[RMDB]
RNA sequence: GGGAACGACUCGAGUAGAGUCGAAAACUAUCUUCGGAUAGAGGGGAGGGGUCUCGGAGAACGAGGCUAAGACAUGAUCUGAAGCCUCCACGGAUCAACAGCUUAGCUACCCACCGUUCCCGAGACGGAGGCACCCAGGUUGCGCCUUCGGGCGCAAGAAGUGGGAAAUUUUCGAAUUUCCCACUUCAAAAGAAACAACAACAACAAC
Reactivity to DMS in 0.01 (KOAc 150mM, MgCl2 10mM, bicine 150mM(pH8.5), 24C), signal-to-noise 1, nucleotides 027 to 156: c010u000a070u000c000u000u000c240g000g040a160u000a090g020a040g000g010g040g000a090g030g000g040g060u000c040u000c010g000g000a140g000a050a100c030g020a130g130g010c000u000a050a040g020a080c110a300u010g000a130u000c000u040g000a080a190g010c010c010u000c000c010a300c030g000g010a040u000c020a060a060c130a110g000c010u000u000a010g020c010u000a060c020c010c010a300c060c000g000u000u000c020c010c070g010a020g000a010c020g040g050a020g080g050c040a060c010c000c010a300g010g000u000u010g000c030g040c000c000u000u000c300g060g000g010c000g120c040a000a000
Reactivity to 2A3 in 0.01 (KOAc 150mM, MgCl2 10mM, bicine 150mM(pH8.5), 24C), signal-to-noise 2, nucleotides 027 to 156: c000u010a020u040c000u020u050c240g080g000a000u020a020g020a100g050g010g000g020a170g020g030g030g020u010c000u000c000g010g010a300g000a060a000c000g010a020g000g040c010u000a010a000g030a040c090a130u150g000a010u000c000u010g040a100a030g000c000c000u000c000c000a000c010g000g000a000u000c010a020a100c040a070g150c010u030u000a010g000c000u030a080c060c080c100a030c060c000g000u000u000c000c000c000g000a010g000a000c010g000g010a000g010g030c010a010c010c010c000a030g160g010u070u020g010c000g000c020c000u040u070c190g110g020g000c000g000c010a000a040
Chemical mapping of a 207-nucleotide RNA with DMS and 2A3.
For 2A3, 1,717 sequencing reads were counted.
High DMS reactivity at an A or C suggests that its Watson-Crick edge is free.
The reactions ran in a buffer of 150 mM KOAc, 10 mM MgCl2 and 150 mM bicine (pH 8.5), at 24 C.
For DMS, 1,371 sequencing reads were counted.